An RNA of 177 nucleotides, treated with DMS and 2A3 and read out base by base. The RNA was probed in 150 mM KOAc, 10 mM MgCl2 and 150 mM bicine (pH 8.5) at 24 C.
[RMDB]
RNA sequence: GGGAACGACUCGAGUAGAGUCGAAAAGAUAUGGAGAAAGGUAUUGUCAGCGAUGUCGGAAACGACAUCUUUGGCUUGGAUUUAUACUUUCUCCUAAGUCAAAGAGUGAACGUUCGCGUUCACUCAAUCGGUUAUUGAUGUUCGCAUCAAUAACCGAAAAAGAAACAACAACAACAAC
Reactivity to DMS in 0.01 (KOAc 150mM, MgCl2 10mM, bicine 150mM(pH8.5), 24C), signal-to-noise 2, nucleotides 027 to 126: g000a040u010a300u000g000g000a020g000a000a020a000g020g040u010a060u000u000g000u000c000a020g030c220g030a010u000g040u040c000g010g000a090a070a150c000g000a000c000a000u010c000u000u000u000g030g000c030u000u010g010g020a150u030u010u000a030u010a090c000u000u000u000c000u000c000c010u000a070a060g000u010c060a090a100a160g000a000g000u000g000a020a000c000g020u010u000c180g010c020g040u000u000c000a000c000u000c000a010a030
Reactivity to 2A3 in 0.01 (KOAc 150mM, MgCl2 10mM, bicine 150mM(pH8.5), 24C), signal-to-noise 1, nucleotides 027 to 126: g010a020u050a020u110g000g010a000g020a010a000a010g090g070u160a110u210u150g070u120c000a000g000c000g020a000u020g000u000c000g040g000a030a090a050c030g000a000c000a000u000c000u000u030u030g020g000c000u050u070g090g050a130u180u300u140a140u100a100c000u010u000u020c000u000c000c000u000a040a030g040u000c090a240a040a020g020a000g000u000g010a010a040c040g000u040u110c300g000c030g090u050u000c020a000c000u010c010a000a020